[RMDB]
RNA sequence: GGGAACGACUCGAGUAGAGUCGAAAACUCGAACGGUUCGCCGUUCGAGAAAAGCGCGUCAGCGCUACGAUGCAAGCGCAAGCGCGAGCAUCGUAAAUGAAAAAACUUGUGUGUUCGCACACAAGAAUCAAUAUAGGCUCUUCGGAGCCUAUAUUGAAAAAGAAACAACAACAACAAC
Reactivity to 2A3 in 0.01 (KOAc 150mM, MgCl2 10mM, bicine 150mM(pH8.5), 24C), signal-to-noise 2, nucleotides 027 to 126: c000u000c000g000a000a000c000g000g060u080u090c180g040c060c000g000u000u020c010g000a000g000a000a080a000a010g000c000g000c000g130u210c160a080g000c030g000c020u000a010c010g000a020u020g020c000a020a030g000c020g000c070a170a090g140c030g000c000g030a000g000c010a000u010c000g000u040a040a060a090u150g040a110a020a010a000a030a020c010u010u010g000u010g000u010g000u060u050c300g030c090a010c000a000c010a010a000g000a010a050
Reactivity to DMS in 0.01 (KOAc 150mM, MgCl2 10mM, bicine 150mM(pH8.5), 24C), signal-to-noise 3, nucleotides 027 to 126: c000u000c000g000a010a010c000g020g020u000u010c210g030c000c000g010u030u010c010g000a010g000a040a040a060a300g000c010g000c000g020u000c170a090g020c000g020c000u000a000c010g000a010u000g000c000a080a300g000c000g000c130a110a150g030c020g010c010g010a300g000c000a000u000c010g000u000a000a090a070u000g000a010a070a100a080a080a100c000u000u010g000u000g000u000g000u000u020c170g000c000a000c000a000c000a010a010g000a080a090

Conditions: 150 mM KOAc, 10 mM MgCl2 and 150 mM bicine (pH 8.5), 24 C.
Chemical mapping of a 177-nucleotide RNA with 2A3 and DMS.
For 2A3 the reverse transcriptase was SuperScript II with manganese.
Reactivities are given for positions 27 through 126.